[RMDB]
This 177-nucleotide RNA was probed chemically with 2A3 and DMS. For DMS, 1,565 sequencing reads were counted.
RNA sequence: GGGAACGACUCGAGUAGAGUCGAAAAGGCCUCUUCCUAGGUCCGGAGUCUAUCUCCAUCUGGUCCGUUCGGGCCCUCUUCGCCGGGGGAGCCCCCUCUCCAUCCUUGUCUUUCUUUCCGAGAAUUCGUUCAUUAUUCUCUUCGGAGAAUAAUGAACAAAAGAAACAACAACAACAAC
Reactivity to 2A3 in 0.01 (KOAc 150mM, MgCl2 10mM, bicine 150mM(pH8.5), 24C), signal-to-noise 1, nucleotides 027 to 126: g020g020c010c010u060c020u090u050c010c020u040a090g000g050u030c080c050g030g010a010g010u020c040u170a160u060c040u010c020c010a020u030c060u050g030g000u040c040c010g030u060u110c070g000g030g000c000c000c000u010c020u070u070c010g010c000c000g000g000g000g040g010a020g010c000c010c040c000c000u020c010u030c000c000a050u020c000c010u020u060g020u010c000u020u040u060c000u040u020u040c020c010g050a050g100a230a190u120u060c060
Reactivity to DMS in 0.01 (KOAc 150mM, MgCl2 10mM, bicine 150mM(pH8.5), 24C), signal-to-noise 2, nucleotides 027 to 126: g010g000c030c010u000c040u010u000c040c020u000a080g020g020u020c050c080g010g010a030g000u010c130u000a120u010c030u010c010c040a110u010c120u010g040g000u000c040c030g030u000u010c160g000g000g000c000c030c060u000c030u010u000c090g010c100c110g000g010g010g000g000a120g020c040c020c020c040c020u010c010u000c030c020a080u000c030c020u000u000g000u000c030u000u000u010c080u000u010u000c050c030g010a170g000a130a180u020u020c100
As a SHAPE reagent, 2A3 marks flexible, mostly unpaired nucleotides at the ribose 2'-OH. The data come from the RNA Mapping Database (RMDB), library 15KREP.